The record gives the reactivity of an RNA of 177 nucleotides to DMS and 2A3. The RNA was probed in 150 mM KOAc, 10 mM MgCl2 and 150 mM bicine (pH 8.5) at 24 C. For DMS, 15,669 sequencing reads were counted.
RNA sequence: GGGAACGACUCGAGUAGAGUCGAAAAGUAAGGUCGAUCUGUCGAGUUUGCUGCAGACGAUUUCGGACGAUUUCGCGGACACGGGCGUCAACACACGCUUUAUUGGCCCCAGGCGUCUGACCUACACAUAUCCGGUAUGAUUCGUCAUACCGGAUAUAAAAGAAACAACAACAACAAC
Reactivity to DMS in 0.01 (KOAc 150mM, MgCl2 10mM, bicine 150mM(pH8.5), 24C), signal-to-noise 8, nucleotides 027 to 126: g010u020a060a070g000g010u010c010g010a110u010c020u010g000u010c110g020a120g030u010u030u030g020c080u010g010c030a040g010a060c050g000a070u010u010u020c020g010g010a040c040g010a060u020u000u030c120g020c240g010g010a110c060a050c300g010g000g010c040g030u000c170a080a130c300a120c240a090c060g000c000u000u010u020a090u040u020g000g000c020c010c000c040a100g020g000c030g000u000c000u000g000a110c040c010u000a060c160a080c170
Reactivity to 2A3 in 0.01 (KOAc 150mM, MgCl2 10mM, bicine 150mM(pH8.5), 24C), signal-to-noise 9, nucleotides 027 to 126: g120u150a070a060g070g030u020c010g050a300u010c030u050g070u050c040g060a080g110u050u260u200g120c060u050g000c010a010g010a030c000g030a040u080u050u070c030g030g020a010c000g030a040u070u150u150c110g020c090g040g010a020c030a020c070g020g010g000c030g030u040c070a230a020c040a010c020a020c070g020c000u090u090u080a150u090u140g030g010c010c000c010c000a040g050g020c010g010u000c010u020g030a050c000c000u060a040c080a010c020